[RMDB]
RNA sequence: GGGAACGACUCGAGUAGAGUCGAAAAUCGGUGUAACCAGACUAUUGAACAGAUGUUACUGUAGAACAGUGGCUGUUCGGUGUGAGUAGAACUCACGCAUCUGAGUUAACUGUCACCUGUAUGGCGGGCAGUGGUGAGUAUUCGUACUCACCACUGCAAAAGAAACAACAACAACAAC
Reactivity to DMS in 0.01 (KOAc 150mM, MgCl2 10mM, bicine 150mM(pH8.5), 24C), signal-to-noise 2, nucleotides 027 to 126: u010c000g000g000u000g000u000a020a040c010c000a000g000a080c170u000a120u030u010g020a000a010c010a000g000a090u020g020u000u010a010c020u010g000u000a060g040a040a300c000a000g040u000g010g010c010u000g000u010u010c010g000g000u000g030u000g000a010g010u000a130g010a020a300c010u000c000a030c000g010c040a050u000c050u000g000a020g000u000u010a060a020c020u000g030u000c040a070c000c030u010g040u000a100u000g010g010c020g000g010
Reactivity to 2A3 in 0.01 (KOAc 150mM, MgCl2 10mM, bicine 150mM(pH8.5), 24C), signal-to-noise 1, nucleotides 027 to 126: u080c030g080g000u090g000u020a000a010c010c000a000g010a030c110u100a080u130u280g010a040a000c000a000g040a070u120g110u220u180a010c000u000g050u080a130g080a300a020c000a000g010u000g040g020c010u000g000u000u010c010g010g010u000g000u010g000a000g020u050a040g020a100a040c010u000c000a000c000g000c010a030u000c000u020g030a020g110u060u010a020a000c010u010g000u060c010a020c060c000u030g110u040a050u140g070g030c000g020g030
About this RNA: This 177-nucleotide RNA was probed chemically with DMS and 2A3. The RNA was probed in 150 mM KOAc, 10 mM MgCl2 and 150 mM bicine (pH 8.5) at 24 C. The data come from the RNA Mapping Database (RMDB), library OK2TRN.